[RMDB]
RNA sequence: GGGAACGACUCGAGUAGAGUCGAAAAGAUAUGGAGACACUACCCACCAAGUGAUCACAGGUGCGUUUGACGUGGGUCGGAAACGACCCACCGAGCAUAGUGAUCACUUGAGGUGUCUCCUAAGUCACUGUAAGUACUAGUUCGCUAGUACUUACAGAAAAGAAACAACAACAACAAC
Reactivity to DMS in 0.01 (KOAc 150mM, MgCl2 10mM, bicine 150mM(pH8.5), 24C), signal-to-noise 9, nucleotides 027 to 126: g020a120u010a210u000g000g010a020g010a020c010a010c010u000a140c030c030c030a300c110c000a000a010g010u000g000a000u000c010a010c010a130g020g030u000g000c010g010u000u010u010g020a110c300g010u000g000g010g010u000c000g000g000a080a070a240c020g000a020c000c000c000a000c000c010g010a070g020c010a020u000a040g020u010g000a010u000c000a000c000u000u000g000a040g020g010u000g010u010c010u000c000c000u000a020a090g010u010c130a150
Reactivity to 2A3 in 0.01 (KOAc 150mM, MgCl2 10mM, bicine 150mM(pH8.5), 24C), signal-to-noise 5, nucleotides 027 to 126: g150a060u300a160u300g000g000a000g010a000c000a010c010u290a300c010c020c020a010c020c000a010a000g000u000g010a010u010c000a010c030a100g300g240u020g010c060g070u150u300u300g090a080c060g000u010g000g000g020u010c000g040g010a080a110a070c010g000a010c000c000c000a000c000c000g010a010g000c000a020u020a030g010u010g010a000u010c000a000c000u000u010g000a000g000g000u000g000u020c000u000c000c000u000a010a010g060u070c100a030
An RNA of 177 nucleotides, treated with DMS and 2A3 and read out base by base. Source: RMDB library TTRINS, as collected in RNAgym. DMS adducts were read by reverse transcription with MarathonRT. Values cover nucleotides 27 to 126. The reactions ran in a buffer of 150 mM KOAc, 10 mM MgCl2 and 150 mM bicine (pH 8.5), at 24 C. The 2A3 profile rests on 23,088 reads.